Description:
This 177-nucleotide RNA was probed chemically with 2A3 and DMS. It was measured as part of the RMDB library OK2TRN. The DMS profile rests on 10,630 reads. DMS adducts were read by reverse transcription with MarathonRT. For 2A3, 4,995 sequencing reads were counted.
RNA sequence: GGGAACGACUCGAGUAGAGUCGAAAAGUCUGAUAAAACGCGGUAAUAUCCAUGCUCACGGUGUCACCUCUACUGUGCGUCGCGGCUUGUCGGAGAGACCGGUGCAUUACUGGCAGGUGCCGCUGGCCAAGAGGGCUAUUUUCGAAUAGCCCUCUUGAAAAGAAACAACAACAACAAC
Reactivity to 2A3 in 0.01 (KOAc 150mM, MgCl2 10mM, bicine 150mM(pH8.5), 24C), signal-to-noise 3, nucleotides 027 to 126: g020u020c030u020g080a080u100a170a120a040a040c080g020c040g000g030u050a100a030u040a070u160c040c040a040u100g020c030u060c020a120c020g040g000u030g060u050c050a060c030c000u000c020u070a050c020u030g030u030g090c030g070u080c040g010c010g050g030c000u020u050g080u110c090g050g010a090g010a000g010a150c020c000g020g010u010g030c010a050u050u080a150c030u050g020g030c070a030g060g020u030g020c000c000g000c030u030g030g020c020
Reactivity to DMS in 0.01 (KOAc 150mM, MgCl2 10mM, bicine 150mM(pH8.5), 24C), signal-to-noise 6, nucleotides 027 to 126: g010u000c040u000g000a120u010a050a050a090a120c090g010c030g000g010u010a070a080u000a080u010c040c060a080u000g010c040u010c070a110c030g000g000u000g000u000c050a090c070c030u000c060u000a050c080u000g010u010g000c070g010u000c080g030c110g000g000c040u000u000g020u000c110g000g010a120g010a090g010a070c020c010g020g010u000g010c060a050u000u000a080c140u000g000g000c110a060g010g010u010g000c010c010g000c020u000g000g010c160